[RMDB]
RNA sequence: GGGAACGACUCGAGUAGAGUCGAAAACAGCUACUCAGGAGGCUGAGGCAGGAGAAUGGCGUGAACCCAGGAGGCGAAGCUUGCAGUGAGCCGAGAUGGUGCCAUUGCACUCCAGCCUGGGCAACGGAGCGAGAGACUCUGUCUCAAAAAAAAAAAAGUAAAUACGACGUUUCGACGUCGUAUUUACAAAAGAAACAACAACAACAAC
Reactivity to 2A3 in 0.01 (KOAc 150mM, MgCl2 10mM, bicine 150mM(pH8.5), 24C), signal-to-noise 1, nucleotides 027 to 156: c040a000g000c010u050a040c010u060c070a000g040g040a030g180g000c060u110g040a010g060g000c010a020g020g030a020g030a020a000u050g060g000c000g060u110g150a080a070c010c000c000a000g020g060a080g050g090c080g040a030a040g020c060u100u100g070c080a040g000u000g110a010g000c000c000g060a030g010a110u120g030g000u040g000c010c000a000u000u150g060c060a020c030u010c000c020a020g000c000c010u030g000g000g000c030a040a070c060g030g000a010g000c020g020a050g000a000g020a110c030u040c070u190g060u000c020u040c060a050a040a070a020a000a000a000a000a000a010a150a000

Background:
Chemical mapping of a 207-nucleotide RNA with 2A3. For 2A3, 649 sequencing reads were counted.